[RMDB]
RNA sequence: GGGAACGACUCGAGUAGAGUCGAAAACUCAGGAUAGAGACUCUUGGCCAACACAGAUGCCUCCUGCCUCAACCAACACCCGUCUGACAGCCCUGCAGGUACCUAUUUCACAAAGCACAAGGGCUCAGUUUGUAAAGGGUUUCGACCCUUUACAAACAAAAGAAACAACAACAACAAC
Reactivity to 2A3 in 0.01 (KOAc 150mM, MgCl2 10mM, bicine 150mM(pH8.5), 24C), signal-to-noise 2, nucleotides 027 to 126: c020u000c000a010g040g070a100u130a110g120a030g050a110c020u020c030u100u070g060g010c040c020a110a030c080a030c020a100g090a150u130g000c000c000u030c000c010u000g020c000c010u060c050a060a040c030c000a000a060c040a050c010c020c030g040u010c050u030g050a070c050a020g020c020c000c000u000g040c030a070g000g050u020a010c030c020u050a160u010u140u060c120a080c020a080a030a020g180c150a050c040a140a040g140g000g000c020u010c010a020
Reactivity to DMS in 0.01 (KOAc 150mM, MgCl2 10mM, bicine 150mM(pH8.5), 24C), signal-to-noise 2, nucleotides 027 to 126: c020u000c030a080g000g020a100u020a150g000a080g010a110c060u000c060u010u000g010g000c020c040a060a080c110a100c120a080g000a060u010g020c050c020u010c050c030u020g000c000c000u010c060a060a120c050c040a050a080c110a090c040c050c010g000u000c010u020g010a120c120a060g010c020c040c000u010g000c070a050g000g010u000a040c070c030u020a100u010u000u000c140a090c160a040a040a150g020c060a050c040a090a050g000g000g000c030u010c080a070

Description
Conditions: 150 mM KOAc, 10 mM MgCl2 and 150 mM bicine (pH 8.5), 24 C. This 177-nucleotide RNA was probed chemically with 2A3 and DMS. The DMS profile rests on 1,374 reads. DMS adducts were read by reverse transcription with MarathonRT.